[RMDB]
RNA sequence: GGGAACGACUCGAGUAGAGUCGAAAAUUUCCCCCGGAGGAGAGCUGCCUCUUCUUGUUCUCCAGGGCCUUCCUUCUUCGGUGGUCCCGCCUCUCCUGUUCGGUGAACCCUCCCGGGUGUUUCCUCUACACAUUCGCGUUCGCGCGAAUGAAAAGAAACAACAACAACAAC
Reactivity to 2A3 in 0.01 (KOAc 150mM, MgCl2 10mM, bicine 150mM(pH8.5), 24C), signal-to-noise 4, nucleotides 027 to 129: u030u020u030c000c010c020c000c020g030g020a030g040g010a010g000a010g030c130u110g020c030c000u090c000u070u030c010u090u140g030u000u010c010u020c030c020a060g000g000g000c000c000u090u120c040c000u010u090c000u070u050c020g000g020u050g040g000u070c000c000c000g000c020c000u050c000u000c000c000u060g050u080u070c030g020g010u060g060a080a060c000c000c000u040c010c010c000g010g020g000u020g020u000u010u000c000c000u030c030u060a040c070a010
Reactivity to DMS in 0.01 (KOAc 150mM, MgCl2 10mM, bicine 150mM(pH8.5), 24C), signal-to-noise 5, nucleotides 027 to 129: u030u030u010c010c000c000c040c030g070g000a080g020g000a000g060a090g050c000u060g000c090c050u030c130u030u000c050u030u030g040u000u000c040u060c070c000a110g020g040g030c070c100u030u040c000c000u050u020c060u030u040c100g030g050u020g030g020u020c050c050c040g010c130c060u010c000u030c030c030u020g020u030u040c090g000g000u000g030a090a130c000c000c000u010c040c030c020g060g040g020u020g020u000u030u000c000c000u050c060u060a130c160a040